Conditions: 150 mM KOAc, 10 mM MgCl2 and 150 mM bicine (pH 8.5), 24 C. The record gives the reactivity of an RNA of 177 nucleotides to DMS and 2A3. For 2A3 the reverse transcriptase was SuperScript II with manganese. Values cover nucleotides 27 to 126. It was measured as part of the RMDB library OK1LIB.
RNA sequence: GGGAACGACUCGAGUAGAGUCGAAAAGGUGGGCCACUAUAUACUUGCAGGCGAAGUUGUGGCUAGUGCGCAAUGUGGGAUCCACUGGUGAAUGAGUUUCCAGACUCGGUGCAUGGGCUUAGGUGUAUAGAUGUCAUACGUUCGCGUAUGACAUCUAAAAAGAAACAACAACAACAAC
Reactivity to DMS in 0.01 (KOAc 150mM, MgCl2 10mM, bicine 150mM(pH8.5), 24C), signal-to-noise 4, nucleotides 027 to 126: g010g010u000g000g000g000c010c020a060c030u030a090u050a090u060a100c100u000u020g020c040a120g020g000c050g020a080a080g020u000u000g010u020g010g030c020u010a070g010u010g010c120g030c030a070a070u040g000u010g000g010g000a100u040c010c020a060c030u010g000g020u010g010a090a090u000g000a110g010u000u000u000c050c050a060g010a070c040u000c030g000g000u010g000c060a060u020g010g010g000c030u000u020a060g010g010u000g010u040a120
Reactivity to 2A3 in 0.01 (KOAc 150mM, MgCl2 10mM, bicine 150mM(pH8.5), 24C), signal-to-noise 2, nucleotides 027 to 126: g080g000u070g030g020g000c000c020a000c030u030a030u020a020u050a300c040u040u080g020c040a020g060g000c040g070a070a050g020u120u110g050u020g070g000c010u030a040g050u030g110c070g000c070a070a080u120g000u050g070g000g050a050u050c030c000a040c050u040g000g040u060g050a120a110u100g010a010g040u040u090u020c010c010a020g020a040c010u010c010g040g050u040g010c040a110u100g020g050g000c010u080u050a050g040g030u040g000u040a030